Structure probing data (2A3) for a 207-nucleotide construct. For 2A3 the reverse transcriptase was SuperScript II with manganese.
[RMDB]
RNA sequence: GGGAACGACUCGAGUAGAGUCGAAAAGUAUCCCUAGAUGAUAAAACACCGCACAUGGCUCGUAAGAACGGUUAAAUUAGCAAGUAAUGCAAAUUACGCGAGGUAACGCAUGGCCUAGGCUCGUUAGAAAAGGGAGAAUCCUUCGGGAUUCUCCCAAGCCAUACUAGUGCUUCGGCACUAGUAUGGCAAAAGAAACAACAACAACAAC
Reactivity to 2A3 in 0.01 (KOAc 150mM, MgCl2 10mM, bicine 150mM(pH8.5), 24C), signal-to-noise 1, nucleotides 027 to 156: g030u030a170u110c000c000c030u010a010g070a210u170g050a050u240a000a070a060a000c030a030c030c050g040c030a030c000a130u020g020g020c010u020c060g010u060a060a090g010a300a020c040g010g070u000u070a040a080a140u060u090a080g020c050a090a140g080u090a110a020u080g130c030a000a000a110u040u000a070c040g020c030g110a070g070g000u010a000a010c120g000c120a030u050g030g020c000c000u020a020g070g020c040u000c030g030u090u030a120g080a040a110a030a040g000g000g000a020g000a000a000u000c000c020u000u220c190g030g000g000a000u000u000c000u000c000c030c000a000a000